[RMDB]
RNA sequence: GGGAACGACUCGAGUAGAGUCGAAAACUGCCUUAGGUGUGUAACUAACUAUCUGGACAAAGUCAGCAGGAGACGUCCACAUCUCAGCCUGCCCCCUUGGAGAGUGCUAUACCACCCAUUACCUGUGACUCAGCCAUCUUCAGCUAUGACAGGUAUAGACUAAUCACUGAUUCGUCAGUGAUUAGUCAAAAGAAACAACAACAACAAC
Reactivity to 2A3 in 0.01 (KOAc 150mM, MgCl2 10mM, bicine 150mM(pH8.5), 24C), signal-to-noise 3, nucleotides 027 to 156: c040u060g010c030c010u060u070a060g030g040u050g000u010g020u100a100a090c040u050a060a010c010u030a110u140c030u060g020g000a050c080a090a080a040g040u080c030a010g030c000a010g020g060a040g000a030c030g070u030c040c000a020c020a070u060c040u020c030a020g040c020c000u080g000c000c010c010c020c040u020u020g000g000a030g000a000g000u060g020c010u050a040u030a110c030c030a030c010c020c000a040u030u040a020c000c010u000g010u020g030a060c020u030c170a010g010c000c010a060u050c070u140u080c030a020g020c010u040a010u050g040a020c000a010g020g000u010a020u050a020
Reactivity to DMS in 0.01 (KOAc 150mM, MgCl2 10mM, bicine 150mM(pH8.5), 24C), signal-to-noise 2, nucleotides 027 to 156: c040u010g020c020c000u000u000a060g040g060u000g020u000g020u000a080a090c060u020a080a120c060u000a090u000c070u000g000g000a210c000a080a070a090g000u000c060a070g000c070a120g020g000a110g030a070c040g000u000c030c060a100c070a110u000c030u020c070a070g020c030c020u020g030c010c020c040c020c050u000u000g000g000a120g000a050g010u020g030c030u010a120u000a070c030c040a060c010c010c020a150u000u000a030c010c020u010g000u010g000a130c070u000c110a090g000c020c030a070u000c140u010u000c100a070g020c040u010a010u000g000a060c020a040g020g000u000a050u000a120
Chemical mapping of a 207-nucleotide RNA with 2A3 and DMS.
The 2A3 profile rests on 2,015 reads.
The reactions ran in a buffer of 150 mM KOAc, 10 mM MgCl2 and 150 mM bicine (pH 8.5), at 24 C.
Reactivities are given for positions 27 through 156.
It was measured as part of the RMDB library OK3TST.
For DMS the reverse transcriptase was MarathonRT.